[RMDB]
Structure probing data (DMS and 2A3) for a 177-nucleotide construct. The data come from the RNA Mapping Database (RMDB), library M2PK50. The RNA was probed in 150 mM KOAc, 10 mM MgCl2 and 150 mM bicine (pH 8.5) at 24 C. Values are in units of 0.01, from 0 to 300, in steps of 10.
RNA sequence: GGGAACGACUCGAGUAGAGUCGAAAAGACCUUCAGUUCGCUGAAGGUCGAUCAUGGUAAGAGAGAUUACCAUCUGUUAAGUGAUAUGGAUAAGAUCUCUCAGUGAACGUGCUUUCGAGCACGUUAAGGAUCUGUGCAGAUUCGUCUGCACAGAUCCAAAAGAAACAACAACAACAAC
Reactivity to DMS in 0.01 (KOAc 150mM, MgCl2 10mM, bicine 150mM(pH8.5), 24C), signal-to-noise 1, nucleotides 027 to 126: g020a010c000c000u000u020c000a040g000u000u030c280g000c000u000g000a040a000g010g000u000c000g010a080u010c080a120u010g010g000u010a050a220g010a000g000a000g010a010u010u000a060c060c020a020u010c000u000g020u000u000a040a070g020u000g030a130u000a000u000g010g010a100u000a090a030g010a040u000c010u000c000u010c000a220g030u010g030a010a030c000g000u010g010c000u010u010u030c280g000a000g000c000a000c000g000u000u000a020a100
Reactivity to 2A3 in 0.01 (KOAc 150mM, MgCl2 10mM, bicine 150mM(pH8.5), 24C), signal-to-noise 1, nucleotides 027 to 126: g020a000c000c000u000u040c010a020g050u010u090c150g000c120u000g000a000a000g000g020u000c000g000a000u000c000a010u100g110g060u070a170a000g000a000g010a000g000a010u000u000a030c090c000a000u000c010u060g140u140u090a230a130g180u100g230a110u060a000u160g010g000a000u010a080a040g000a050u000c010u070c040u000c010a010g010u080g130a040a000c000g000u000g000c050u070u000u070c240g030a000g040c010a000c060g000u000u000a030a030